[RMDB]
RNA sequence: GGGAACGACUCGAGUAGAGUCGAAAACGCCGUUGUCACCGCGUGUAAGGAUCAGGCGGAGCCCGAGUACACCGAGGGUGUCACCAACGCCAAGCCCACCGGUGAGCGCACCGACGUCGACUCGGACUAAUUAGUGGAGUUUCGACUCCACUAAUUAAAAAGAAACAACAACAACAAC
Reactivity to DMS in 0.01 (KOAc 150mM, MgCl2 10mM, bicine 150mM(pH8.5), 24C), signal-to-noise 9, nucleotides 027 to 126: c060g010c050c050g000u000u010g000u000c010a040c010c030g010c190g020u000g010u020a100a130g000g000a070u030c100a220g000g010c020g000g000a240g010c030c020c010g000a300g000u020a110c190a080c170c020g010a270g000g000g030u000g000u030c070a120c090c110a060a230c090g000c020c040a100a160g010c020c040c010a070c030c020g000g010u000g000a240g000c090g000c050a060c070c000g000a070c110g000u020c050g000a090c050u010c020g000g010a300c160
Reactivity to 2A3 in 0.01 (KOAc 150mM, MgCl2 10mM, bicine 150mM(pH8.5), 24C), signal-to-noise 8, nucleotides 027 to 126: c050g050c040c010g040u040u130g110u070c020a020c020c010g040c080g060u030g030u060a120a100g060g030a080u120c080a040g030g000c020g010g000a030g010c000c010c000g010a030g010u120a110c130a080c080c050g020a060g030g060g000u040g130u100c050a050c090c040a080a030c020g000c030c000a080a060g030c010c000c000a020c020c000g000g010u010g020a020g000c040g000c010a060c020c010g050a060c020g110u130c040g030a050c020u010c010g020g020a050c040